Conditions: 150 mM KOAc, 10 mM MgCl2 and 150 mM bicine (pH 8.5), 24 C. Structure probing data (2A3) for a 207-nucleotide construct. It was measured as part of the RMDB library M2RFPK. The 2A3 profile rests on 673 reads. 2A3 adducts were read by reverse transcription with SuperScript II with manganese.
[RMDB]
RNA sequence: GGGAACGACUCGAGUAGAGUCGAAAAAAUUAGAGGCAAUUUGAAAUAAUUUAAAUUAGCUCAACCCUACUGCACUUACCGAACUAGAUAACGGUGUAGUAGGGGUAAAUUCUCCGUAUUCGGUGCGCAACCACCUGAGGUUUCGACCUCAGGUGAAGUGUUUACUCUUCUUCGGAAGAGUAAACACAAAAGAAACAACAACAACAAC
Reactivity to 2A3 in 0.01 (KOAc 150mM, MgCl2 10mM, bicine 150mM(pH8.5), 24C), signal-to-noise 1, nucleotides 027 to 156: a000a000u130u090a070g020a040g110g060c010a000a030u020u090u080g040a050a060a090u290a020a260u140u100u100a040a060a020u080u060a040g010c010u060c010a000a040c000c000c000u000a000c010u000g000c000a000c000u040u040a020c020c020g010a020a000c010u010a090g070a110u050a300a060c140g000g000u000g010u000a000g000u000a000g010g010g000g020u030a000a000a020u060u000c020u010c030c000g000u020a060u080u040c010g000g020u030g010c010g010c080a030a080c010c010a000c000c000u020g000a010g020g040u050u090u210c120g130a080c000c000u000c010a000g050g000u000g000a020a000